The record gives the reactivity of an RNA of 177 nucleotides to DMS and 2A3. The DMS profile rests on 8,822 reads. Reactivities are given for positions 27 through 126. For 2A3, 11,217 sequencing reads were counted.

[RMDB]
RNA sequence: GGGAACGACUCGAGUAGAGUCGAAAACUCGUGGGCUGAUUCAGUCCUCUAGGGCACACGCCAUUGUGGCUCUGACUCGUCACACGGAGAAGUGUGUGGUAGUUGACGCCCCAGGGCUCCUCCGUGACGAUCUCACUAUUUUCGAAUAGUGAGAUCGAAAAGAAACAACAACAACAAC
Reactivity to DMS in 0.01 (KOAc 150mM, MgCl2 10mM, bicine 150mM(pH8.5), 24C), signal-to-noise 6, nucleotides 027 to 126: c020u010c030g040u000g000g000g020c010u000g000a180u010u010c050a020g010u000c010c000u000c060u000a050g010g010g020c030a130c070a050c150g010c120c130a140u000u000g010u000g010g000c010u000c020u010g010a100c110u000c080g000u010c080a180c030a050c040g000g010a050g000a060a040g030u000g020u000g010u000g010g010u000a070g010u010u010g010a140c190g010c030c010c020c020a060g000g000g010c000u000c010c010u000c010c020g010u000g010a180
Reactivity to 2A3 in 0.01 (KOAc 150mM, MgCl2 10mM, bicine 150mM(pH8.5), 24C), signal-to-noise 7, nucleotides 027 to 126: c010u010c030g030u060g000g010g000c030u030g020a300u300u220c050a000g010u000c000c000u000c030u050a030g030g010g010c050a040c010a020c270g060c060c070a100u070u220g060u080g060g000c000u000c030u030g070a060c030u010c070g070u060c070a020c000a010c080g050g010a050g010a080a030g030u050g010u030g030u080g090g000u040a090g060u070u160g060a070c110g030c020c000c000c010a050g070g090g000c010u010c000c000u000c010c010g020u020g040a040